[RMDB]
RNA sequence: GGGAACGACUCGAGUAGAGUCGAAAAAGCGAUUGGUGUUGUAAGGAUCCUGGUCGCAGUAAGUUAACCAACAUGGUGAAUUCUUGCACACUAUUAACGAUAGGUGUAGCCGAUAAACAAAUCAUCUUAUGGUUUUUUAACGCAGUGGUCUUAGAUAGUAACUCAGUUCAUUCGUGAACUGAGUUACAAAAGAAACAACAACAACAAC
Reactivity to 2A3 in 0.01 (KOAc 150mM, MgCl2 10mM, bicine 150mM(pH8.5), 24C), signal-to-noise 1, nucleotides 027 to 156: a000g140c090g060a110u030u000g000g000u010g030u160u040g030u040a090a080g030g000a030u020c010c010u050g000g030u040c050g000c090a020g030u060a100a000g010u000u020a000a010c000c030a020a040c050a090u080g040g000u020g040a000a090u110u030c020u020u070g010c000a010c010a010c040u020a030u180u050a150a070c130g010a010u050a080g000g060u020g020u040a010g000c070c020g030a030u180a080a130a030c080a020a070a010u050c030a000u000c020u060u160a070u030g000g000u000u040u020u010u000u050a050a030c030g000c000a020g020u020g060g000u000c010u000u000a080g080a070u200a060
Reactivity to DMS in 0.01 (KOAc 150mM, MgCl2 10mM, bicine 150mM(pH8.5), 24C), signal-to-noise 1, nucleotides 027 to 156: a120g040c080g030a180u000u020g040g010u020g000u000u000g000u000a060a090g020g000a020u000c030c000u020g010g060u020c040g030c060a120g050u000a010a080g000u000u000a040a070c010c020a040a160c110a140u010g040g010u020g010a120a040u010u000c070u010u010g020c070a070c050a040c000u000a030u000u000a110a120c130g000a150u000a000g000g040u000g000u000a030g040c060c130g000a060u000a030a040a170c070a070a100a020u010c040a040u010c040u010u000a140u010g010g030u000u000u000u000u000u000a000a110c020g010c030a100g020u000g020g020u000c060u000u010a120g020a090u000a220